Chemical mapping of a 177-nucleotide RNA with 2A3 and DMS. The data come from the RNA Mapping Database (RMDB), library OK1LIB. High 2A3 reactivity points to a flexible backbone, as in loops and unpaired stretches. For 2A3 the reverse transcriptase was SuperScript II with manganese.

RNA sequence: GGGAACGACUCGAGUAGAGUCGAAAAGGACUGAGACACCGCCCAGGCUGCUACGGCAGGCAGCAGCGGAGAAUAUUGCUCUAUGGGCGGAAGCCUGAUGCAGCGACGCGGUGUGCGGGAUGAAGGCAAUAUAUAUGAUUUUCGAAUCAUAUAUAUUAAAAGAAACAACAACAACAAC
Reactivity to 2A3 in 0.01 (KOAc 150mM, MgCl2 10mM, bicine 150mM(pH8.5), 24C), signal-to-noise 8, nucleotides 027 to 126: g050g020a050c060u070g030a010g020a090c020a010c020c000g000c000c010c000a040g140g010c000u000g000c000u040a050c070g100g000c020a030g050g000c010a020g000c000a010g110c040g030g030a020g010a070a070u290a140u210u300g060c000u000c010u020a080u090g030g020g000c000g000g000a010a000g000c000c010u030g010a040u090g010c010a010g000c000g030a040c040g000c000g000g010u040g010u040g020c010g010g020g000a040u090g040a040a030g050g000c020
Reactivity to DMS in 0.01 (KOAc 150mM, MgCl2 10mM, bicine 150mM(pH8.5), 24C), signal-to-noise 9, nucleotides 027 to 126: g000g010a100c030u000g000a110g010a070c060a060c010c000g010c000c130c090a210g010g000c000u000g010c010u010a230c240g010g010c040a050g000g020c120a050g010c020a060g020c100g000g010a020g000a110a140u040a120u030u050g010c000u000c000u000a120u030g010g000g000c000g000g000a060a060g010c000c000u000g000a100u040g010c030a030g010c030g000a140c300g000c010g000g000u000g010u010g000c030g000g000g000a080u020g000a090a060g010g010c100